[RMDB]
RNA sequence: GGGAACGACUCGAGUAGAGUCGAAAAGAUAUGGAGUGCCUUUUGACGGAGUCACGGUCGGAAACGACCGAAGUCUCCGAUAAGGACACUCCUAAGUCAAAGUAGUAUGAGUUCGCUCAUACUACAACAUACGCCCUUUGUUCGCAAAGGGCGUAUGAAAAGAAACAACAACAACAAC
Reactivity to 2A3 in 0.01 (KOAc 150mM, MgCl2 10mM, bicine 150mM(pH8.5), 24C), signal-to-noise 2, nucleotides 027 to 126: g050a010u070a030u210g000g000a010g030u010g010c020c010u060u060u060u140g280a160c080g010g000a000g000u000c010a020c040g000g000u020c000g010g010a140a050a070c000g000a000c030c010g020a030a020g010u000c000u030c000c010g020a010u000a000a000g000g020a040c010a000c000u000c000c000u000a110a010g020u010c060a190a020a100g000u000a000g010u010a000u020g010a000g020u040u150c280g080c150u000c010a000u000a010c000u000a000c000a010a000
Reactivity to DMS in 0.01 (KOAc 150mM, MgCl2 10mM, bicine 150mM(pH8.5), 24C), signal-to-noise 2, nucleotides 027 to 126: g010a030u000a300u010g000g000a010g020u000g020c000c010u000u000u000u010g030a150c300g010g000a010g010u010c030a250c010g000g020u000c000g010g010a130a090a190c000g000a010c010c000g000a020a040g030u000c000u000c000c010g010a070u000a000a010g000g010a010c000a000c000u000c020c010u000a000a090g020u000c040a180a140a170g000u000a020g000u000a000u000g000a030g030u010u010c300g000c000u000c000a000u000a000c000u000a000c010a060a130